[RMDB]
RNA sequence: GGGAACGACUCGAGUAGAGUCGAAAACACCAUGUUAGCCAGGAUAGUCUCGAUCUCCUAACCUAGUGAUCCGCCCGCCUCGGCCUCCCAAAGUGCUGGAAUUACAAGUGUGAGCCACUGCGCCCGGGUGAAUAGAUUUGUUCGCAAAUCUAUUCACAAAAGAAACAACAACAACAAC
Reactivity to DMS in 0.01 (KOAc 150mM, MgCl2 10mM, bicine 150mM(pH8.5), 24C), signal-to-noise 4, nucleotides 027 to 126: c100a180c020c040a090u010g010u010u010a080g020c040c050a080g010g000a110u000a080g010u000c030u000c060g000a070u000c040u000c030c010u000a060a100c040c060u000a070g020u000g000a060u000c060c050g010c050c010c040g010c030c020u000c040g010g010c030c020u000c020c020c020a060a080a050g010u000g010c040u000g000g000a080a050u000u000a030c090a030a100g020u000g000u010g000a090g020c050c020a020c040u000g010c070g010c010c010c030g010g010
Reactivity to 2A3 in 0.01 (KOAc 150mM, MgCl2 10mM, bicine 150mM(pH8.5), 24C), signal-to-noise 2, nucleotides 027 to 126: c030a020c040c020a030u080g030u090u130a050g030c040c050a030g060g020a100u060a160g050u000c000u010c030g050a050u010c020u020c000c020u030a060a080c020c010u020a040g080u020g110a050u050c020c010g030c030c060c040g000c020c010u010c000g070g000c030c000u010c000c000c010a030a030a010g070u090g030c040u060g010g070a130a120u120u040a120c030a060a100g030u030g010u010g070a020g030c040c030a040c030u050g020c050g040c020c010c000g120g050